Chemical mapping of a 177-nucleotide RNA with DMS and 2A3. 2A3 adducts were read by reverse transcription with SuperScript II with manganese. For DMS, 2,327 sequencing reads were counted. The 2A3 profile rests on 3,207 reads.
RNA sequence: GGGAACGACUCGAGUAGAGUCGAAAAGAAUAUAAGAGCGCAGUAAUUGUGAGAGCAAACUGCGCCCGGACUGUAGGAUCCGGUGGCACAGCAACGCUCAAUCACAAGACGCUGUGCCACAUGAAGACCUACCUCCCUCAUUCGUGAGGGAGGUAGGAAAAGAAACAACAACAACAAC
Reactivity to DMS in 0.01 (KOAc 150mM, MgCl2 10mM, bicine 150mM(pH8.5), 24C), signal-to-noise 2, nucleotides 027 to 126: g000a090a090u090a140u070a030a090g010a100g030c000g000c000a000g010u000a040a070u010u050g030u000g040a220g020a180g020c030a060a050a060c000u000g000c000g000c000c010c010g000g000a020c120u020g050u020a050g000g000a200u000c020c040g040g010u000g000g000c000a010c000a000g000c000a090a250c200g000c030u000c120a050a060u070c120a160c150a130a000g010a080c100g000c000u000g010u030g000c000c000a000c000a030u030g030a050a070g010a030
Reactivity to 2A3 in 0.01 (KOAc 150mM, MgCl2 10mM, bicine 150mM(pH8.5), 24C), signal-to-noise 4, nucleotides 027 to 126: g020a060a030u220a000u050a080a020g010a010g030c010g000c010a000g010u080a210a190u030u020g000u000g080a050g000a000g050c000a000a030a030c000u000g000c000g000c000c000c000g000g010a000c050u130g100u220a050g060g150a100u010c020c010g000g020u010g000g000c000a000c000a000g000c000a060a090c100g040c020u020c060a060a150u180c060a040c020a110a020g060a000c140g000c000u000g000u000g000c000c000a000c010a000u150g020a080a040g050a060